[RMDB]
RNA sequence: GGGAACGACUCGAGUAGAGUCGAAAAUGGAAGAGGGGGUGUUCUCCGGGCUGAAUCCGUUCCAGAUUGGUGACAGCGAUGAUAAGACGUUGAUGUCUUUCCUUAAAGCCUGGGUUAAGCGUUGCGCCUUGUAUUCGAUCUUCGGAUCGAAUACAAGAAAAGAAACAACAACAACAAC
Reactivity to DMS in 0.01 (KOAc 150mM, MgCl2 10mM, bicine 150mM(pH8.5), 24C), signal-to-noise 3, nucleotides 027 to 126: u030g020g010a070a030g010a070g000g010g000g000g010u030g000u000u010c060u000c020c040g010g000g000c020u010g010a080a120u000c050c050g010u000u010c020c030a080g000a150u030u030g000g000u020g000a110c070a050g000c040g010a070u010g020a130u030a040a070g000a070c030g000u030u040g000a100u030g010u000c000u000u000u000c040c020u010u020a050a100a060g010c040c040u000g000g010g000u000u000a020a070g000c110g010u010u000g000c080g010c060
Reactivity to 2A3 in 0.01 (KOAc 150mM, MgCl2 10mM, bicine 150mM(pH8.5), 24C), signal-to-noise 4, nucleotides 027 to 126: u150g030g030a050a010g010a070g050g030g020g000g010u050g060u120u020c070u020c020c010g010g000g000c020u040g070a040a060u030c010c030g030u080u050c030c000a040g050a190u110u130g050g000u080g030a020c010a020g030c010g060a050u050g010a030u070a150a040g060a020c050g060u080u130g070a070u160g020u010c000u010u030u030c020c000u060u110a100a080a020g000c000c010u040g030g000g050u040u090a060a010g040c040g030u030u070g030c010g040c000
The record gives the reactivity of an RNA of 177 nucleotides to DMS and 2A3. 2A3 adducts were read by reverse transcription with SuperScript II with manganese. The DMS profile rests on 8,011 reads. The reactions ran in a buffer of 150 mM KOAc, 10 mM MgCl2 and 150 mM bicine (pH 8.5), at 24 C.